[RMDB]
RNA sequence: GGGAACGACUCGAGUAGAGUCGAAAAAUGAAGCACAGUCACCGGCUCCCCGUUGUGGUAGACCCGAUCCCCAGGAGCGAUGCGGGGCUUCUGACUCUCGGGGGCAGGCCCGGACCACGUGCCGUGGUACAGCAGGCUGAUGAUGUCAUCGAUCAUCGCUAAAGGUAUCGUUCGCGAUACCUUUAGCAAAAGAAACAACAACAACAAC
Reactivity to 2A3 in 0.01 (KOAc 150mM, MgCl2 10mM, bicine 150mM(pH8.5), 24C), signal-to-noise 1, nucleotides 027 to 156: a000u040g020a030a000g080c010a000c010a000g130u090c080a050c100c020g010g020c040u300c020c000c000c000g050u090u030g080u050g000g010u010a010g030a010c000c000c000g010a080u070c090c000c070c000a160g130g000a070g040c120g000a040u210g270c000g010g010g000g000c000u120u030c000u030g120a020c000u030c060u080c110g010g030g000g070g080c060a050g060g060c030c090c000g000g000a000c010c010a050c030g060u110g170c010c010g010u010g060g020u240a120c100a060g040c040a000g100g000c030u010g000a130u020g000a010u080g010u070c010a030u030c040g040a000u020c010a010u000c000
An RNA of 207 nucleotides, treated with 2A3 and read out base by base. 2A3 adducts were read by reverse transcription with SuperScript II with manganese. Conditions: 150 mM KOAc, 10 mM MgCl2 and 150 mM bicine (pH 8.5), 24 C. For 2A3, 504 sequencing reads were counted. It was measured as part of the RMDB library OK3TST.